An RNA of 207 nucleotides, treated with 2A3 and DMS and read out base by base. The reactions ran in a buffer of 150 mM KOAc, 10 mM MgCl2 and 150 mM bicine (pH 8.5), at 24 C.

[RMDB]
RNA sequence: GGGAACGACUCGAGUAGAGUCGAAAAAGCAUUAAAGACGGGAAGAUUGCUAAUGCUGAAGUGCUGAAGCAUGGCGAUACCGAAGCGAUGAUGCUGAGCGCGACGGAUCAGAUUGUGCCGGAACUCAUUGAGAAGCAGGACAUUAACAAGGUGGAUGGAGUCUUACUUGUUUCGACAAGUAAGACUCAAAAGAAACAACAACAACAAC
Reactivity to 2A3 in 0.01 (KOAc 150mM, MgCl2 10mM, bicine 150mM(pH8.5), 24C), signal-to-noise 2, nucleotides 027 to 156: a000g000c010a000u020u030a120a000a010g040a060c070g000g020g030a030a100g030a130u000u140g010c030u100a110a050u010g000c020u050g010a150a020g060u070g100c120u090g060a030a000g020c040a030u000g000g030c030g000a020u030a090c010c030g020a000a020g000c030g020a000u100g020a030u060g010c100u060g010a030g030c030g000c000g020a000c020g000g030a020u070c000a040g050a050u030u080g040u070g060c060c020g000g010a030a070c000u040c050a100u080u110g020a040g040a080a000g020c010a010g040g010a000c050a090u080u070a080a000c070a040a030g000g030u010g020g040a060u110g090
Reactivity to DMS in 0.01 (KOAc 150mM, MgCl2 10mM, bicine 150mM(pH8.5), 24C), signal-to-noise 1, nucleotides 027 to 156: a020g050c000a030u000u000a020a120a070g040a110c010g030g020g020a170a040g000a120u000u010g070c060u000a080a060u060g040c000u000g000a160a020g010u000g040c080u020g000a250a110g010c030a060u000g020g000c000g010a180u000a130c090c020g070a150a300g050c060g000a130u000g000a120u000g000c060u010g000a070g000c080g010c040g010a280c000g040g010a150u020c030a060g000a110u030u000g030u000g000c090c000g020g020a070a080c060u000c080a100u000u010g000a110g070a050a040g000c110a000g020g020a060c040a060u000u000a140a010c000a070a030g020g010u020g040g000a250u000g010
Values cover nucleotides 27 to 156.